[RMDB]
RNA sequence: GGGAACGACUCGAGUAGAGUCGAAAAGGUGGACUCUUGUUGAUGAAAGUGGAUGCAUUGGACCACAAGAACAACACCGCCAGAGCAAGUAUCAGGAAGUGGCAAACCAAAGUGAGGAGAUGGUACCACUCAAGACCUCUUUCGAGAGGUCUUGAGUAAAAGAAACAACAACAACAAC
Reactivity to DMS in 0.01 (KOAc 150mM, MgCl2 10mM, bicine 150mM(pH8.5), 24C), signal-to-noise 3, nucleotides 027 to 126: g020g040u010g010g010a140c150u000c040u020u020g010u030u030g010a100u010g000a160a070a080g010u000g020g000a160u060g000c020a100u020u000g000g010a240c110c030a040c020a000a050g000a050a040c160a050a170c050a030c030c010g000c080c030a040g000a090g010c010a050a130g000u040a030u000c110a060g010g030a070a100g010u000g000g020c020a020a050a070c050c050a020a110a100g050u040g010a040g020g020a150g000a160u000g020g010u030a120c020c070
Reactivity to 2A3 in 0.01 (KOAc 150mM, MgCl2 10mM, bicine 150mM(pH8.5), 24C), signal-to-noise 3, nucleotides 027 to 126: g060g010u030g040g030a100c030u030c010u100u100g030u090u030g040a210u120g030a200a040a010g070u060g040g040a140u180g060c020a150u040u190g090g040a050c000c010a040c000a000a030g060a040a060c090a000a010c000a030c010c000g010c030c030a010g020a000g040c030a130a010g040u030a120u130c020a010g000g120a080a050g010u040g040g000c000a070a050a050c020c000a090a040a020g120u180g050a040g050g000a040g000a000u120g030g030u030a040c000c020
Conditions: 150 mM KOAc, 10 mM MgCl2 and 150 mM bicine (pH 8.5), 24 C. This 177-nucleotide RNA was probed chemically with DMS and 2A3. For 2A3, 1,214 sequencing reads were counted. DMS adducts were read by reverse transcription with MarathonRT. 2A3 is a SHAPE reagent: it acylates the 2'-hydroxyl of flexible nucleotides of all four kinds. Reactivities are given for positions 27 through 126. Reactivities are rounded to 0.1 and cut off at 0 and 3.